This 177-nucleotide RNA was probed chemically with 2A3. For 2A3, 470 sequencing reads were counted. Source: RMDB library OK1LIB, as collected in RNAgym.
[RMDB]
RNA sequence: GGGAACGACUCGAGUAGAGUCGAAAAAAGCUUGGUACCUAGCGUCUCAGAGGGUAAACAUAGACUUAGAUGUAUUGAAAGCUAUAACCCCAGUUUCCACUUCAAACAAUUUAUCCCAUAGAUUGAGGCUUCCUGUGAGAUUCGUCUCACAGGAAGCAAAAGAAACAACAACAACAAC
Reactivity to 2A3 in 0.01 (KOAc 150mM, MgCl2 10mM, bicine 150mM(pH8.5), 24C), signal-to-noise 1, nucleotides 027 to 126: a030a000g000c000u020u080g060g000u040a040c010c000u000a000g000c000g180u000c000u000c000a130g010a120g030g110g050u050a000a300a000c010a020u010a080g020a000c000u000u000a020g040a140u020g090u140a050u110u200g300a120a000a000g020c000u000a000u070a150a020c000c000c000c000a000g000u000u110u090c000c000a020c000u100u000c000a110a190a170c020a000a020u020u110u220a030u010c000c000c120a070u160a000g080a110u010u120g020a090g040